[RMDB]
RNA sequence: GGGAACGACUCGAGUAGAGUCGAAAACAGCAAAUUGGCGAUUAAGCCAGUUUGUUGAUCUGUGCAGUCAGGUUAGCCUUAUGACGUGCAGCUUUGUUUUUGUGGAUCAGACCUUUAGCAGCCUGACUAUGACACCAAUUUUCGAAUUGGUGUCAUAAAAAGAAACAACAACAACAAC
Reactivity to 2A3 in 0.01 (KOAc 150mM, MgCl2 10mM, bicine 150mM(pH8.5), 24C), signal-to-noise 3, nucleotides 027 to 126: c010a010g010c010a010a000a000u000u010g010g010c020g280a160u270u300a130a050g000c000c000a010g020u000u000u000g010u010u010g000a020u010c030u030g100u120g150c050a000g040u000c000a010g010g050u070u120a060g000c000c030u110u180a140u120g040a050c060g060u120g020c020a030g020c040u180u210u180g260u130u260u080u100u160g080u070g050g050a160u040c040a020g100a180c040c000u100u140u110a020g000c010a000g000c030c000u000g000a000c030
Reactivity to DMS in 0.01 (KOAc 150mM, MgCl2 10mM, bicine 150mM(pH8.5), 24C), signal-to-noise 6, nucleotides 027 to 126: c030a020g010c000a000a000a010u000u000g000g010c010g000a230u000u010a150a190g000c000c000a010g010u000u000u000g010u000u000g000a070u000c040u000g020u010g020c110a090g010u000c010a020g000g010u000u000a120g020c040c100u000u010a090u000g010a060c070g010u010g000c030a040g010c140u010u010u000g000u010u000u010u010u000g020u000g010g000a110u000c050a040g000a110c160c110u000u000u000a130g020c050a090g000c010c010u000g000a030c050
Conditions: 150 mM KOAc, 10 mM MgCl2 and 150 mM bicine (pH 8.5), 24 C.
Chemical mapping of a 177-nucleotide RNA with 2A3 and DMS.
It was measured as part of the RMDB library OK2TST.
The 2A3 profile rests on 2,632 reads.